[RMDB]
RNA sequence: GGGAACGACUCGAGUAGAGUCGAAAAUGGACUUUUUACAGUUCCUACUUAUCCGGUUUUAACGCUGGUUUAUUGGCGCAAAGGUUUACGGAUAAACAACUAAUAAUUAAACCUUUUGUGUGCGAAAAUUGGACGUUUAGGUUCGCCUAAACGUCAACUGUGGUAUAUGAUUCGUCAUAUACCACAGAAAAGAAACAACAACAACAAC
Reactivity to 2A3 in 0.01 (KOAc 150mM, MgCl2 10mM, bicine 150mM(pH8.5), 24C), signal-to-noise 6, nucleotides 027 to 156: u100g020g010a040c030u060u100u060u100u160a100c160a040g010u090u100c010c000u020a060c030u060u040a020u010c000c010g010g030u020u030u000u080a090a040c060g000c030u050g080g090u170u190u150a130u140u260g010g010c010g010c030a030a020a010g000g000u000u000u000a010c000g010g000a010u050a080a110a010c050a030a010c050u160a060a160u100a140a020u170u150a020a000a010c000c000u000u010u060u100g050u000g010u030g060c080g050a080a030a070a150u120u110g110g000a000c000g000u000u000u000a000g030g010u010u040c190g040c010c000u010a010a000a020c010g000u000c000a000a000
Reactivity to DMS in 0.01 (KOAc 150mM, MgCl2 10mM, bicine 150mM(pH8.5), 24C), signal-to-noise 3, nucleotides 027 to 156: u010g010g000a060c020u010u010u000u000u010a120c110a160g010u000u000c010c020u000a130c120u010u000a030u000c000c000g020g000u000u000u010u000a230a060c000g030c020u010g000g010u010u010u000a120u000u000g030g000c020g010c020a020a040a020g040g010u000u000u000a160c010g000g010a060u000a020a030a180c050a080a200c060u000a090a080u010a100a220u000u000a000a040a010c010c010u000u000u000u000g020u000g010u000g030c020g000a070a040a120a220u010u000g020g030a010c010g020u000u010u000a000g010g020u000u000c300g000c000c000u000a000a010a010c000g020u000c000a010a040

The data come from the RNA Mapping Database (RMDB), library M2RFPK. An RNA of 207 nucleotides, treated with 2A3 and DMS and read out base by base. The RNA was probed in 150 mM KOAc, 10 mM MgCl2 and 150 mM bicine (pH 8.5) at 24 C. The 2A3 profile rests on 3,879 reads. Reactivities are given for positions 27 through 156. For DMS the reverse transcriptase was MarathonRT. 2A3 adducts were read by reverse transcription with SuperScript II with manganese.